The record gives the reactivity of an RNA of 177 nucleotides to 2A3 and DMS.
The 2A3 profile rests on 1,198 reads.
Reactivities are given for positions 27 through 126.

[RMDB]
RNA sequence: GGGAACGACUCGAGUAGAGUCGAAAAGAGUACGGCACCCGCCAGGUCAAGGGCGACCGCCUGAACUACCUCGGCGGCAACUACAAGCCGCUCGACGGACUGGAGAUAUCGCUCUACGGCUCGCACAUAGGUAUGGUAGGUUCGCCUACCAUACCUAAAAAGAAACAACAACAACAAC
Reactivity to 2A3 in 0.01 (KOAc 150mM, MgCl2 10mM, bicine 150mM(pH8.5), 24C), signal-to-noise 1, nucleotides 027 to 126: g050a000g040u140a030c080g040g000c040a020c020c000c010g040c040c000a010g000g040u080c070a040a110g020g010g040c010g050a090c020c080g060c010c030u040g030a010a040c060u060a050c070c000u010c020g000g030c000g000g000c010a000a040c010u280a030c000a080a050g000c010c000g010c020u090c030g080a110c050g050g110a140c040u070g060g010a030g000a040u110a020u070c070g040c040u010c000u010a060c040g000g040c010u020c010g130c000a100c010a050
Reactivity to DMS in 0.01 (KOAc 150mM, MgCl2 10mM, bicine 150mM(pH8.5), 24C), signal-to-noise 2, nucleotides 027 to 126: g000a100g000u000a040c070g000g000c070a140c130c020c000g010c050c050a050g020g000u000c090a110a140g000g000g010c020g020a070c150c110g020c040c020u010g000a130a080c150u040a020c050c000u000c070g000g000c000g000g000c060a040a040c160u000a150c290a070a110g000c010c010g030c000u020c050g000a150c050g010g000a080c050u000g000g000a030g000a160u030a070u000c100g000c000u000c000u000a130c060g000g000c030u000c030g000c100a120c120a100